[RMDB]
RNA sequence: GGGAACGACUCGAGUAGAGUCGAAAAUCUCUAUUCUUUUCUUUUGAAAGAGGAGACGGGUCUCCGCCCGCCCCCAGCCCCGGGAUAGCCGAAGUGCCGAGGAAGAGCCGGAGGAGGAGAGGCAAGAAGAUCGCACGGUUCGCCGUGCGAAAAAGAAACAACAACAACAAC
Reactivity to 2A3 in 0.01 (KOAc 150mM, MgCl2 10mM, bicine 150mM(pH8.5), 24C), signal-to-noise 2, nucleotides 027 to 129: u020c000u000c000u000a260u120u110c030u040u050u020u120c000u000u270u110u270g060a000a020a010g020a000g000g030a090g000a000c000g050g000g000u040c080u040c120c070g030c010c000c030g010c010c000c060c000c000a000g010c000c000c000c000g000g030g000a020u110a010g000c000c010g060a070a000g040u060g070c060c010g000a010g050g000a000a030g000a040g030c020c000g060g070a000g010g000a000g020g000a020g010a000g020g000c020a000a000g000a020a000g000a030
Reactivity to DMS in 0.01 (KOAc 150mM, MgCl2 10mM, bicine 150mM(pH8.5), 24C), signal-to-noise 2, nucleotides 027 to 129: u020c020u030c040u030a210u120u020c040u050u040u030u000c030u050u000u000u140g010a040a010a000g000a050g000g030a020g030a060c080g010g000g030u000c000u000c120c030g010c000c010c010g000c030c050c000c030c060a300g010c050c110c000c000g020g000g000a040u060a070g040c010c010g030a090a080g000u020g030c080c040g000a000g000g020a020a010g010a050g050c050c090g040g010a040g000g010a070g070g020a050g020a010g020g020c140a100a020g020a060a080g010a010